[RMDB]
RNA sequence: GGGAACGACUCGAGUAGAGUCGAAAACAGGCACACCAAAUGAAAAAUUGGUGACAACCUCCACGGCGCCUGAUUUUGUAGCAUUUAAUGUCUUUCAGGGCAUUGAAACGGCUGUUGGCCAUUAUGUUACUUAUCUAACGUUCGCGUUAGAUAAGUAAAAAGAAACAACAACAACAAC
Reactivity to 2A3 in 0.01 (KOAc 150mM, MgCl2 10mM, bicine 150mM(pH8.5), 24C), signal-to-noise 2, nucleotides 027 to 126: c020a010g010g000c010a000c010a000c050c000a060a030a020u170g110a060a050a070a080a050u010u010g000g020u000g030a040c030a020a080c000c030u050c080c050a070c060g020g030c020g010c020c020u030g060a090u040u130u060u160g110u060a010g020c030a020u060u000u050a030a000u030g020u000c020u050u300u150c130a080g130g000g010c000a010u010u000g000a050a050a030c090g050g000c010u030g090u060u070g040g030c000c020a030u130u110a080u150g100u030
Reactivity to DMS in 0.01 (KOAc 150mM, MgCl2 10mM, bicine 150mM(pH8.5), 24C), signal-to-noise 3, nucleotides 027 to 126: c020a000g000g040c080a300c010a010c000c010a000a010a070u010g000a090a130a110a130a180u000u000g000g020u010g010a110c160a090a150c030c040u000c100c090a060c110g000g040c110g030c010c010u000g010a120u010u000u000u010g020u010a030g030c050a080u000u000u000a030a020u000g010u000c000u000u030u020c300a140g000g000g000c010a000u000u000g010a000a060a080c170g010g020c010u010g000u000u000g010g010c050c050a050u000u000a090u000g000u010
An RNA of 177 nucleotides, treated with 2A3 and DMS and read out base by base. Source: RMDB library 15KREP, as collected in RNAgym. For 2A3, 2,074 sequencing reads were counted. Conditions: 150 mM KOAc, 10 mM MgCl2 and 150 mM bicine (pH 8.5), 24 C.